[RMDB]
RNA sequence: GGGAACGACUCGAGUAGAGUCGAAAAGAAGUGGAUUGCAGAUGCUAGAUUUGGAGAGAUGCAGUUUGUGCAAAGGAGCGUCUUGAAAAGGCGUUCGAAAUGUGUCUGCCAAGGCUAAAAUAAUCACAUUUUGUAUUUGCACAGCAUUUUCAUUGUACAUGCCGUAGGUGUUCGCACCUACGGCAUGAAAAGAAACAACAACAACAAC
Reactivity to 2A3 in 0.01 (KOAc 150mM, MgCl2 10mM, bicine 150mM(pH8.5), 24C), signal-to-noise 1, nucleotides 027 to 156: g090a180a000g030u010g040g050a070u050u050g080c030a010g050a100u070g010c070u030a050g010a220u050u090u130g020g010a070g000a010g000a010u000g000c000a010g140u140u240u100g010u040g000c020a020a020a000g080g010a050g020c000g020u000c000u010u090g070a090a110a000a000g000g000c000g000u010u000c000g050a000a000a000u010g010u010g010u030c070u050g070c070c000a020a030g040g040c060u100a040a070a090a070u160a000a220u210c000a000c000a010u000u000u010u080g110u050a140u000u010u000g030c020a000c000a000g000c010a020u040u070u130u040c010a060u000u220g030u000a030
The data come from the RNA Mapping Database (RMDB), library OK3TST. This 207-nucleotide RNA was probed chemically with 2A3. The reactions ran in a buffer of 150 mM KOAc, 10 mM MgCl2 and 150 mM bicine (pH 8.5), at 24 C. Reactivities are given for positions 27 through 156. 2A3 adducts were read by reverse transcription with SuperScript II with manganese.